[RMDB]
Chemical mapping of a 177-nucleotide RNA with 2A3 and DMS. For 2A3, 781 sequencing reads were counted. Source: RMDB libraries RFM100 and RFMREP, as collected in RNAgym. The reactions ran in a buffer of 150 mM KOAc, 10 mM MgCl2 and 150 mM bicine (pH 8.5), at 24 C. 2A3 adducts were read by reverse transcription with SuperScript II with manganese. High DMS reactivity at an A or C suggests that its Watson-Crick edge is free.

RNA sequence: GGGAACGACUCGAGUAGAGUCGAAAAGUCACUGUUAGCCCGCCAAGAAGCGACCCCUCCGGGGCGAGCUGAGCGGCGUGCGGCGGGGUGUCAUCCGUCAGUUCUCCUAGUGACGCAGGCAGUGCGACGGUGUUAGCGGAUUCGUCCGCUAACACCGAAAAGAAACAACAACAACAAC
Reactivity to 2A3 in 0.01 (KOAc 150mM, MgCl2 10mM, bicine 150mM(pH8.5), 24C), signal-to-noise 1, nucleotides 027 to 126: g040u010c000a000c030u000g040u070u040a050g000c000c000c000g000c040c010a030a050g090a070a000g010c000g070a130c000c000c000c070u000c100c200g000g000g000g030c000g000a010g000c020u060g020a050g000c010g000g020c010g020u050g030c010g000g000c000g030g000g000g000u120g020u050c030a130u030c000c000g000u040c050a070g010u010u040c080u040c010c000u020a050g040u000g060a040c060g010c020a000g000g070c020a020g030u020g030c020g000a000
Reactivity to DMS in 0.01 (KOAc 150mM, MgCl2 10mM, bicine 150mM(pH8.5), 24C), signal-to-noise 3, nucleotides 027 to 126: g030u020c020a080c030u000g000u000u000a120g050c000c010c010g030c020c000a020a300g010a100a050g000c010g000a300c300c000c000c000u000c230c170g000g010g040g000c000g010a250g000c000u010g000a100g020c220g000g000c000g000u000g010c090g010g010c020g000g000g010g030u020g000u010c030a070u020c030c000g000u020c040a050g030u000u000c020u010c020c060u010a150g000u010g000a020c040g000c020a090g000g000c000a030g080u030g010c000g010a300